[RMDB]
RNA sequence: GGGAACGACUCGAGUAGAGUCGAAAAGUGCCUUUGGACCUGAAAGUUUGUGUGAGGACUGGGACCCUGAAGUUGGACUGAACCCAUUGCAUGGCUCACUUUUCCUAACAGAUCACUGGCUUUGACAGUGUGGAUGAUGAGUCCAAACACAGUGGCACCAGUCCUAAAUCUUCGGAUUUAGGACUGGAAAAGAAACAACAACAACAAC
Reactivity to DMS in 0.01 (KOAc 150mM, MgCl2 10mM, bicine 150mM(pH8.5), 24C), signal-to-noise 2, nucleotides 027 to 156: g010u000g000c000c000u000u000u000g030g000a110c010c040u020g040a150a080a120g000u000u000u010g010u000g010u000g000a130g000g010a080c020u010g050g020g000a130c030c010c020u000g000a030a160g040u000u000g030g000a080c070u010g000a130a300c020c000c020a100u000u000g040c010a180u000g020g010c040u000c030a040c020u000u010u000u010c030c010u000a080a230c120a150g000a130u000c010a060c020u000g000g010c030u020u000u000g020a090c020a060g070u000g040u010g000g020a020u000g000a100u020g000a170g020u010c000c020a040a040a070c070a110c020a060g040u000g000g010c030a080
Reactivity to 2A3 in 0.01 (KOAc 150mM, MgCl2 10mM, bicine 150mM(pH8.5), 24C), signal-to-noise 1, nucleotides 027 to 156: g000u010g010c010c000u100u010u080g060g000a100c030c030u080g040a010a160a050g090u080u090u120g070u070g020u110g050a040g000g020a030c070u100g040g000g000a100c000c020c040u050g050a100a060g080u080u030g000g010a030c070u060g040a020a090c000c000c000a000u020u030g060c060a010u030g000g000c000u030c010a100c000u060u120u010u030c090c000u110a270a090c020a010g040a020u040c010a020c050u000g030g020c000u100u040u140g070a060c000a000g000u030g020u080g060g010a100u050g010a020u040g030a010g030u000c030c000a000a010a000c090a000c000a040g000u090g050g080c020a030

The record gives the reactivity of an RNA of 207 nucleotides to DMS and 2A3. The reactions ran in a buffer of 150 mM KOAc, 10 mM MgCl2 and 150 mM bicine (pH 8.5), at 24 C. High DMS reactivity at an A or C suggests that its Watson-Crick edge is free.